[RMDB]
RNA sequence: GGGAACGACUCGAGUAGAGUCGAAAAUCUUCCCUGGUCUAACUCAAUAAUUGCCAUCAUGAAAAUUCUGGGUGACUUUUUGUGACUAAAGUCCCAUUGUAAGCCACAUUCUUUGUCCAGCAGUGCUGUGACUUACCGGAUUCGUCCGGUAAGUCACAAAAGAAACAACAACAACAAC
Reactivity to 2A3 in 0.01 (KOAc 150mM, MgCl2 10mM, bicine 150mM(pH8.5), 24C), signal-to-noise 3, nucleotides 027 to 126: u020c020u020u000c000c000c000u020g020g010u010c020u040a020a010c000u010c090a050a170u130a180a070u080u040g010c020c000a050u050c020a030u150g110a070a150a060a010u140u030c040u040g070g000g010u070g040a060c000u030u050u020u050u110g060u040g070a050c060u110a090a000a010g010u010c010c000c010a030u040u090g070u100a100a000g020c020c000a010c000a050u050u050c040u030u050u090g030u060c040c000a020g010c020a030g100u040g140c010u030

Conditions: 150 mM KOAc, 10 mM MgCl2 and 150 mM bicine (pH 8.5), 24 C. Chemical mapping of a 177-nucleotide RNA with 2A3. High 2A3 reactivity points to a flexible backbone, as in loops and unpaired stretches. Reactivities are given for positions 27 through 126. For 2A3, 1,382 sequencing reads were counted. For 2A3 the reverse transcriptase was SuperScript II with manganese. The data come from the RNA Mapping Database (RMDB), library RFM100.